[RMDB]
RNA sequence: GGGAACGACUCGAGUAGAGUCGAAAAGUUCUAAACUGGCAGGCUUGAGUGGGUCAGGGGUGUGUGGAACUUCCGGUGGAGCGGUGAAAUGUGUUGAUAUCGGAAGGAACGCCGGUGGCGAAAGCGAGCAUAUUUCCCGGUUCGCCGGGAAAUAUGCAAAAGAAACAACAACAACAAC
Reactivity to 2A3 in 0.01 (KOAc 150mM, MgCl2 10mM, bicine 150mM(pH8.5), 24C), signal-to-noise 2, nucleotides 027 to 126: g020u060u060c060u120a030a110a110c040u050g030g000c070a030g100g030c050u060u230g030a040g010u100g000g000g070u040c070a050g010g000g000g000u110g010u050g010u060g040g010a110a030c000u020u000c000c020g040g020u010g000g000a000g000c000g000g050u100g070a030a080a070u080g030u000g130u280u130g050a030u030a060u070c020g000g030a000a000g090g060a030a000c000g000c000c000g080g070u170g020g000c030g000a020a020a000g090c030g000a030
Reactivity to DMS in 0.01 (KOAc 150mM, MgCl2 10mM, bicine 150mM(pH8.5), 24C), signal-to-noise 1, nucleotides 027 to 126: g070u000u000c040u040a050a120a150c000u000g020g000c130a160g000g000c120u000u010g000a130g000u000g000g000g020u000c060a040g000g000g000g030u010g010u020g020u020g000g010a190a080c060u000u000c060c050g020g020u000g020g000a030g020c000g000g020u020g010a110a140a090u000g000u020g010u010u000g000a070u040a010u000c040g000g050a040a010g010g010a090a140c100g000c040c010g010g010u010g000g020c070g000a070a020a190g060c000g000a090